An RNA of 207 nucleotides, treated with 2A3 and DMS and read out base by base. High DMS reactivity at an A or C suggests that its Watson-Crick edge is free. For DMS the reverse transcriptase was MarathonRT. 2A3 adducts were read by reverse transcription with SuperScript II with manganese. The RNA was probed in 150 mM KOAc, 10 mM MgCl2 and 150 mM bicine (pH 8.5) at 24 C.
RNA sequence: GGGAACGACUCGAGUAGAGUCGAAAAAUGAAUAAUACAUGUCUGUUUUGGGAUAAAGUAGGGAAAACUAUUAUGGGACCAUAGUCAAGAAAAGCUGUCUUAUUCCUUGAUACACCAUCUCAGCUUCCACAAAGAAGGAUUAGAUCCAUUCUGUGUGUACUCACAAUUCGUUCGCGAAUUGUGAGUAAAAAGAAACAACAACAACAAC
Reactivity to 2A3 in 0.01 (KOAc 150mM, MgCl2 10mM, bicine 150mM(pH8.5), 24C), signal-to-noise 2, nucleotides 027 to 156: a000u060g010a010a030u090a110a040u080a070c040a060u130g050u020c070u120g070u090u090u090u090g080g000g010a090u060a070a160a070g030u040a050g050g000g000a010a060a060a000c000u000a030u260u010a080u150g040g000g030a010c030c040a070u070a060g050u070c020a020a010g050a040a090a010a000g050c040u040g040u000c020u030u060a050u100u090c000c000u010u040g000a000u000a090c040a060c040c000a040u030c010u010c040a040g000c020u120u030c050c000a020c030a020a100a020g040a020a020g030g000a000u050u120a090g040a120u020c000c000a100u010u010c020u010g040u000g010u010g010
Reactivity to DMS in 0.01 (KOAc 150mM, MgCl2 10mM, bicine 150mM(pH8.5), 24C), signal-to-noise 1, nucleotides 027 to 156: a140u000g010a130a080u000a150a120u020a150c120a120u000g000u000c050u090g010u010u000u000u010g000g040g000a120u010a010a010a110g050u030a050g060g020g000a070a010a130a120c080u000a060u000u000a150u000g010g000g000a050c080c050a080u000a170g040u000c010a030a100g010a030a030a060a070g020c080u020g040u010c050u000u000a170u000u000c000c030u010u020g020a140u000a020c040a100c000c000a050u000c060u020c010a080g000c090u000u010c020c030a050c020a030a030a060g010a080a040g000g020a010u010u010a140g020a300u000c030c020a120u000u000c010u000g000u000g000u010g000